[RMDB]
RNA sequence: GGGAACGACUCGAGUAGAGUCGAAAAAAUGCGCGCGGUUGAUUAGUCUGACGACCCUCUUCUGCGGGGUGAGAAAGCAAAUAAUGGAAAGUAGACGCUAAGAAUGCCAGCGUCUUGCCGGUUCCUGUAAUCAAUUCGCAUUCGUGCGAAUUGAUUAAAAAGAAACAACAACAACAAC
Reactivity to DMS in 0.01 (KOAc 150mM, MgCl2 10mM, bicine 150mM(pH8.5), 24C), signal-to-noise 1, nucleotides 027 to 126: a070a030u010g000c030g000c010g070c070g000g010u000u010g000a110u000u010a170g010u000c010u010g020a260c180g010a110c090c040c150u010c050u000u000c110u010g000c070g010g010g000g010u000g040a100g000a080a060a050g010c060a050a050a070u000a040a040u030g000g000a030a050a140g030u000a080g020a020c000g000c000u020a110a140g020a100a100u000g010c130c110a030g000c010g000u000c010u000u000g040c000c040g030g000u000u000c010c010u020g010